[RMDB]
RNA sequence: GGGAACGACUCGAGUAGAGUCGAAAACACAUAGACACAUACACACACAAGCACAAGAAGUUUUCCCCCUGAAUACUUCAUUUGCUAAGAACAAGGACAUUCCUAUAACUCACAGUAGAAUUUGUCACCAAAUGAUUAAGUUCGCUUAAUCAUUUGGAAAAGAAACAACAACAACAAC
Reactivity to 2A3 in 0.01 (KOAc 150mM, MgCl2 10mM, bicine 150mM(pH8.5), 24C), signal-to-noise 5, nucleotides 027 to 126: c040a000c010a060u130a070g080a020c020a000c000a030u090a030c010a000c000a000c000a000c010a050a010g010c000a020c020a060a110g030a030a020g020u010u010u060u070c020c030c000c010c010u010g030a050a010u050a060c010u030u020c010a120u060u050u110g000c010u010a050a020g060a080a020c020a050a020g060g010a010c010a030u030u060c000c010u070a070u040a190a070c040u040c070a060c020a090g080u110a020g030a040a080u070u050u090g040u010c010a020
Reactivity to DMS in 0.01 (KOAc 150mM, MgCl2 10mM, bicine 150mM(pH8.5), 24C), signal-to-noise 7, nucleotides 027 to 126: c090a080c110a070u000a080g010a060c050a040c050a060u000a040c020a030c020a020c050a030c050a080a040g010c010a020c110a070a080g010a040a030g000u000u000u000u000c020c060c030c060c070u010g000a050a040u000a030c030u000u000c020a110u000u000u000g010c030u000a060a070g010a050a040c070a060a080g010g010a050c060a070u000u000c020c020u000a060u000a060a070c050u000c070a030c080a080g010u000a040g000a060a070u000u000u000g000u000c090a190